This 177-nucleotide RNA was probed chemically with 2A3. It was measured as part of the RMDB library OK1LIB. The reactions ran in a buffer of 150 mM KOAc, 10 mM MgCl2 and 150 mM bicine (pH 8.5), at 24 C. The 2A3 profile rests on 473 reads.
RNA sequence: GGGAACGACUCGAGUAGAGUCGAAAACUAAUCAGGUUAUCCGCACAGCAGAGGAACAGCUUCACGCGCUUGUUCAGUCCGCGCGUAAUGGCAAAUGCCAGCGCCCCGGUAACCGUUGCCGCGCCGCCCACCGCGUGCUCUUCGGAGCACGCGGUGGAAAAGAAACAACAACAACAAC
Reactivity to 2A3 in 0.01 (KOAc 150mM, MgCl2 10mM, bicine 150mM(pH8.5), 24C), signal-to-noise 1, nucleotides 027 to 126: c020u170a080a090u100c030a010g110g000u000u000a000u100c020c080g040c030a000c030a010g100c000a050g020a020g180g010a000a080c000a040g000c040u120u060c080a000c120g160c000g000c000u140u220g040u050u010c060a080g260u070c070c000g010c030g000c000g020u120a110a130u150g010g000c050a080a120a250u300g000c030c000a010g020c000g000c070c000c020c070g010g010u010a000a000c060c000g000u010u090g040c020c060g030c000g070c050c000g070c000